[RMDB]
Structure probing data (DMS and 2A3) for a 207-nucleotide construct. 2A3 adducts were read by reverse transcription with SuperScript II with manganese. It was measured as part of the RMDB library M2RFPK.
RNA sequence: GGGAACGACUCGAGUAGAGUCGAAAAUCUAGGGUUCCGCAUGUCAAUUGACAUGGACUGGUCCGAGAGAAAACACAUACGCGUAAAUAGAACCGCGUAUGCACACGGAGGGAAAAAAGCCCGGGAGAAUGGGAUUAUUAGUUCGCUAAUAAUCCAACCAUAAUUCAUGAUUCGUCAUGAAUUAUGGAAAAGAAACAACAACAACAAC
Reactivity to DMS in 0.01 (KOAc 150mM, MgCl2 10mM, bicine 150mM(pH8.5), 24C), signal-to-noise 2, nucleotides 027 to 156: u000c010u000a040g010g030g010u000u000c000c000g000c010a000u000g010u000c010a300a160u000u020g010a010c000a020u000g000g000a120c060u010g010g000u000c000c000g000a150g000a050g030a130a070a090a080c080a070c000a010u000a010c000g000c010g020u000a070a100a240u000a190g000a130a110c210c000g000c000g070u000a010u000g010c000a060c050a100c030g010g010a180g030g010g000a000a050a100a140a090a160g000c000c010c000g080g000g000a080g010a210a090u000g020g000g010a010u000u000a010u000u000a020g040u000u000c300g020c010u000a020a020u000a020a000u000c000c000a030a070
Reactivity to 2A3 in 0.01 (KOAc 150mM, MgCl2 10mM, bicine 150mM(pH8.5), 24C), signal-to-noise 5, nucleotides 027 to 156: u000c000u010a010g000g010g000u000u010c010c000g000c010a000u000g010u010c030a140a300u250u300g000a000c000a000u010g010g050a090c030u080g020g000u000c000c010g000a000g000a000g010a010a030a010a010c040a000c000a010u000a000c000g010c010g050u100a040a210a130u160a250g100a090a030c040c010g000c000g010u000a000u010g000c010a010c000a000c040g020g020a020g000g000g000a040a300a030a000a000a000g010c000c000c000g010g090g010a010g030a040a080u190g080g000g000a000u010u000a000u000u000a000g030u030u060c200g000c120u000a000a000u000a000a000u000c000c000a000a020